Structure probing data (DMS and 2A3) for a 177-nucleotide construct. For 2A3, 57,868 sequencing reads were counted.

[RMDB]
RNA sequence: GGGAACGACUCGAGUAGAGUCGAAAAGGUAUGAUCCGGGGAAUGCUCUAUAGAUACUCAAACAGCUGAUUUCGGCGCAUCGUCUACCUGCGUUUGUCCCCAACGAUCUGCGGCCGGGCAUGCCCGGGGUGUGUCUUCCUUUCGAGGAGGACGCGCUAAAAGAAACAACAACAACAAC
Reactivity to DMS in 0.01 (KOAc 150mM, MgCl2 10mM, bicine 150mM(pH8.5), 24C), signal-to-noise 9, nucleotides 027 to 126: g010g010u000a040u030g010a060u020c020c030g000g010g000g000a100a040u010g010c020u000c040u010a210u020a080g000a090u020a060c110u020c090a070a100a120c210a080g010c060u010g000a160u010u010u010c020g000g000c120g000c040a040u010c050g000u000c030u010a040c030c010u000g000c060g000u010u020u010g010u010c020c000c010c150a070a080c100g000a050u010c080u010g010c040g000g010c010c030g000g000g000c040a060u010g010c010c000c010g000g000
Reactivity to 2A3 in 0.01 (KOAc 150mM, MgCl2 10mM, bicine 150mM(pH8.5), 24C), signal-to-noise 9, nucleotides 027 to 126: g020g000u040a020u090g020a040u020c000c000g000g000g000g020a090a050u040g010c000u000c000u030a080u050a080g060a040u080a080c020u030c060a050a110a130c060a070g040c040u060g030a120u030u070u090c020g010g000c010g000c020a030u020c020g040u000c020u030a030c000c010u010g000c020g020u010u050u090g040u010c000c000c000c000a010a030c030g010a030u010c020u080g020c010g070g020c000c020g010g000g000c050a050u100g060c000c000c000g000g000

Overview
The data come from the RNA Mapping Database (RMDB), library OK1LIB. The DMS profile rests on 106,056 reads. Reactivities are given for positions 27 through 126.